[RMDB]
RNA sequence: GGGAACGACUCGAGUAGAGUCGAAAACAGGAACUGUGUCUUAUUUACCACUCUCCCAGUAAUGGGCAUAUUCAGUUCAAGUCAAUAAAUAUUUAUUGAGUACCUACUAUGUACUAGACACUAAGUGCUUUCAAUAUACAUCAAUGAGCAAAACAGAUGUUACGUUUUUGUUCGCAAAAACGUAACAAAAAGAAACAACAACAACAAC
Reactivity to 2A3 in 0.01 (KOAc 150mM, MgCl2 10mM, bicine 150mM(pH8.5), 24C), signal-to-noise 4, nucleotides 027 to 156: c040a030g030g050a010a010c010u040g000u000g020u030c040u060u220a140u170u130u090a070c020c000a050c070u080c020u010c020c000c000a000g000u020a000a080u030g000g010g000c010a030u060a080u130u110c020a000g020u000u040c040a070a020g090u000c020a030a040u030a180a080a010u220a120u100u190u060a040u030u080g000a010g010u040a040c010c010u000a040c020u040a090u140g040u020a070c010u030a040g020a060c000a000c100u070a120a030g040u010g040c000u070u070u050c040a100a050u070a020u070a190c030a020u070c030a040a210u170g010a030g040c000a030a030a070a070c080a030g050a080
Reactivity to DMS in 0.01 (KOAc 150mM, MgCl2 10mM, bicine 150mM(pH8.5), 24C), signal-to-noise 2, nucleotides 027 to 156: c040a120g020g010a040a030c040u000g000u010g010u000c000u010u030a120u000u010u000a120c030c020a040c070u020c080u000c040c000c010a140g010u030a040a100u000g020g000g000c030a040u000a080u000u000c040a110g020u000u000c010a100a270g000u000c040a040a080u000a060a070a170u000a090u000u000u000a020u000u030g020a080g010u000a040c070c030u000a050c070u000a070u000g000u000a020c070u000a110g010a090c040a050c010u000a040a110g070u000g020c000u000u000u000c050a120a040u030a160u020a100c030a050u020c060a090a060u000g000a070g010c060a050a080a070a110c120a060g010a240
Conditions: 150 mM KOAc, 10 mM MgCl2 and 150 mM bicine (pH 8.5), 24 C. An RNA of 207 nucleotides, treated with 2A3 and DMS and read out base by base. The 2A3 profile rests on 1,892 reads. The DMS profile rests on 2,614 reads.